[RMDB]
RNA sequence: GGGAACGACUCGAGUAGAGUCGAAAAGAUAUGGACAUCAGGGAGUCUUGCGGGUAUCUCGGAAACGAGCCGAGCCCAGCAAGACGAAGAACUGAUGUCCUAAGUCAAAGUGACGUUCGCGUCACAACACUUCCAUUGACUUCGGUCAAUGGAAGUGAAAAGAAACAACAACAACAAC
Reactivity to 2A3 in 0.01 (KOAc 150mM, MgCl2 10mM, bicine 150mM(pH8.5), 24C), signal-to-noise 2, nucleotides 027 to 126: g030a030u070a020u160g000g020a000c000a000u000c000a020g060g000g000a030g000u010c000u010u000g010c000g050g000g000u110a160u130c030u000c000g010g090a210a300a150c130g020a070g050c020c010g030a040g000c010c000c030a010g000c000a000a020g000a010c000g000a030a010g070a000a000c000u000g000a010u000g010u000c000c010u000a010a040g000u010c050a050a070a130g000u000g040a020c010g000u050u100c300g000c010g090u010c000a010c000a020a010
Reactivity to DMS in 0.01 (KOAc 150mM, MgCl2 10mM, bicine 150mM(pH8.5), 24C), signal-to-noise 2, nucleotides 027 to 126: g000a030u000a300u010g000g000a030c030a000u000c000a010g010g000g000a110g000u000c000u000u030g000c000g010g000g000u000a150u000c010u000c010g000g010a110a110a080c210g030a090g040c190c040g000a030g000c170c010c000a080g050c000a010a000g000a000c000g020a090a120g000a040a140c010u000g030a010u000g000u010c000c000u000a000a130g000u000c020a120a070a070g020u000g000a010c000g000u000u010c190g010c020g000u000c000a010c000a090a140